[RMDB]
RNA sequence: GGGAACGACUCGAGUAGAGUCGAAAACUGAUCCUCAUUUUAUACCCUUAUUACAUUACACUGUAUUUAAGUUUAAGAUAAAAUGGACAGACCAUAGACUGCAAUGAUUGACAAUGAGGAUGUCAUGCCGGUCAUAUUAAUUCGUUAAUAUGACCGGAAAAGAAACAACAACAACAAC
Reactivity to 2A3 in 0.01 (KOAc 150mM, MgCl2 10mM, bicine 150mM(pH8.5), 24C), signal-to-noise 5, nucleotides 027 to 126: c020u020g010a080u020c010c020u030c030a020u000u010u050u050a100u080a110c000c010c000u020u020a030u020u030a020c000a010u050u070a070c060a010c120u030g020u050a090u080u090u020a020a000g010u020u060u160a100a060g030a070u100a070a070a030a010u030g010g020a010c000a020g080a040c010c020a040u060a090g150a080c040u030g020c090a070a140u120g110a240u120u090g020a020c030a010a030u080g000a020g080g000a010u020g030u040c040a040u120g060
Reactivity to DMS in 0.01 (KOAc 150mM, MgCl2 10mM, bicine 150mM(pH8.5), 24C), signal-to-noise 5, nucleotides 027 to 126: c050u000g000a100u000c010c010u000c020a020u000u010u010u000a050u000a100c070c150c010u000u000a030u010u000a020c040a030u010u020a130c220a100c290u010g000u000a030u000u000u000a020a020g010u000u000u000a090a110g010a080u000a030a040a050a030u000g000g020a120c070a050g000a160c030c040a060u000a050g010a110c070u000g010c060a070a040u010g010a090u000u000g010a080c180a050a050u000g000a070g000g010a070u000g000u000c080a060u000g020

This 177-nucleotide RNA was probed chemically with 2A3 and DMS. The 2A3 profile rests on 5,133 reads. The data come from the RNA Mapping Database (RMDB), library OK2TST. 2A3 adducts were read by reverse transcription with SuperScript II with manganese. Reactivities are given for positions 27 through 126. Conditions: 150 mM KOAc, 10 mM MgCl2 and 150 mM bicine (pH 8.5), 24 C.